RNA sequence: GGGAACGACUCGAGUAGAGUCGAAAAGAGCGAUUAGACAAAGGGGUAGAGCUACAUAUUAGAUAGCUGUAUAAUCGUUCAAGUUACAUCAAAACAUCUUCAACAUUUAUUACUUACUUUCCUUUCUGCCAGAGUACGGUAUUCGUACCGUACUCAAGAUUUACCCCUUGUUCGCAAGGGGUAAAUCAAAAGAAACAACAACAACAAC
Reactivity to 2A3 in 0.01 (KOAc 150mM, MgCl2 10mM, bicine 150mM(pH8.5), 24C), signal-to-noise 6, nucleotides 027 to 156: g010a000g000c000g000a000u010u030a040g030a050c070a050a110a020g040g020g000g030u040a030g010a000g060c000u010a010c010a090u250a180u250u160a080g170a260u020a000g020c000u000g010u040a040u010a000a010u010c010g000u010u010c010a020a000g020u060u070a080c040a100u150c070a060a090a050a030c030a100u070c070u300u140c060a100a070c010a140u080u100u210a160u120u100a080c030u070u040a020c000u090u090u110c020c010u020u070u050c020u030g060c010c060a050g000a000g000u000a000c000g000g000u000a020u000u090c090g010u010a000c010c000g000u010a000c000u000c000a000a000
Reactivity to DMS in 0.01 (KOAc 150mM, MgCl2 10mM, bicine 150mM(pH8.5), 24C), signal-to-noise 1, nucleotides 027 to 156: g020a070g030c010g040a000u000u010a040g010a110c020a020a100a100g020g030g000g040u010a110g020a120g060c040u010a000c010a020u000a280u000u000a190g020a200u010a010g040c000u000g020u000a040u010a040a060u020c030g010u000u000c050a010a120g000u040u040a070c100a070u010c070a050a170a150a060c090a070u000c050u000u000c040a000a070c050a110u010u000u000a070u050u010a080c100u000u000a070c080u020u000u040c010c010u000u000u000c010u000g040c110c100a150g000a030g040u000a020c030g040g040u000a070u000u010c300g000u000a010c010c010g020u000a000c000u000c010a020a060

This 207-nucleotide RNA was probed chemically with 2A3 and DMS. 2A3 is a SHAPE reagent: it acylates the 2'-hydroxyl of flexible nucleotides of all four kinds. Source: RMDB library M2RFPK, as collected in RNAgym. For DMS, 1,534 sequencing reads were counted.